[RMDB]
RNA sequence: GGGAACGACUCGAGUAGAGUCGAAAAUGUUUGCAAUUCGUUGCAAACAAACUACCGAGAACGUUGCUCGGUAUAUACAGCGAACCCUUGGAAACAAGGGAACUAUGGAACGCUUCGGCGUUCCAAACCUUUACAAAGAAUUCGUUCUUUGUAAAGGAAAAGAAACAACAACAACAAC
Reactivity to 2A3 in 0.01 (KOAc 150mM, MgCl2 10mM, bicine 150mM(pH8.5), 24C), signal-to-noise 2, nucleotides 027 to 126: u020g010u000u030u000g010c000a000a030u040u060c150g040u070u000g000c010a000a010a000c000a010a050a000c060u030a010c000c010g000a000g020a100a100c100g110u090u150g000c010u000c000g000g000u020a010u000a000u010a030c020a020g060c020g070a120a170c010c000c000u000u000g030g000a050a060a020c000a010a010g000g000g030a000a010c010u020a070u080g000g000a010a000c000g020c030u010u060c210g070g000c010g020u000u000c000c000a000a000a000
Reactivity to DMS in 0.01 (KOAc 150mM, MgCl2 10mM, bicine 150mM(pH8.5), 24C), signal-to-noise 4, nucleotides 027 to 126: u000g010u000u000u010g010c010a000a030u010u020c160g020u000u000g000c000a000a010a010c000a040a100a110c140u000a070c010c000g020a010g000a130a150c190g020u010u010g000c010u000c000g020g010u000a010u000a070u010a110c200a090g000c100g010a120a180c000c000c010u000u000g000g000a170a160a180c000a010a010g010g000g010a020a030c080u010a100u000g010g000a010a010c010g020c000u000u010c160g020g020c000g010u000u000c000c010a010a030a080